[RMDB]
RNA sequence: GGGAACGACUCGAGUAGAGUCGAAAAGAUAUGGAUUCUUCUUUUGACGCGAUACUAGUCGGAAACGACUAGAUCGCGAUAAGAAGAUCCUAAGUCAAAGAAUCCCUCCCUUCGGGGAGGGAUUCAAGAGUAUCGUCUUGUUCGCAAGACGAUACUCAAAAGAAACAACAACAACAAC
Reactivity to DMS in 0.01 (KOAc 150mM, MgCl2 10mM, bicine 150mM(pH8.5), 24C), signal-to-noise 1, nucleotides 027 to 126: g000a040u000a280u020g000g000a050u010u030c000u000u010c000u000u000u000u010g000a160c160g000c010g000a010u000a070c010u000a020g000u000c000g020g000a080a120a230c030g000a010c000u000a000g000a010u000c000g040c000g030a040u000a000a010g000a000a010g000a050u000c000c000u000a060a130g010u010c020a100a090a120g000a010a000u000c000c000c000u000c000c000c000u000u000c210g040g000g000g010a010g000g000g000a000u000u000c000a030a070
Reactivity to 2A3 in 0.01 (KOAc 150mM, MgCl2 10mM, bicine 150mM(pH8.5), 24C), signal-to-noise 2, nucleotides 027 to 126: g000a020u050a060u170g050g010a040u300u020c010u020u040c020u000u140u060u220g280a160c080g020c010g000a000u130a260c030u010a010g000u000c030g010g070a060a060a010c020g000a010c000u000a000g000a010u000c010g000c000g010a010u020a010a000g010a000a010g020a010u000c000c000u000a110a010g070u020c050a180a000a130g000a000a010u000c000c020c020u000c030c000c000u030u050c210g030g000g000g010a000g000g010g000a000u010u000c000a010a000
Record summary:
Conditions: 150 mM KOAc, 10 mM MgCl2 and 150 mM bicine (pH 8.5), 24 C. Chemical mapping of a 177-nucleotide RNA with DMS and 2A3. For DMS, 1,218 sequencing reads were counted. Reactivities are given for positions 27 through 126. The data come from the RNA Mapping Database (RMDB), library TTRDEL.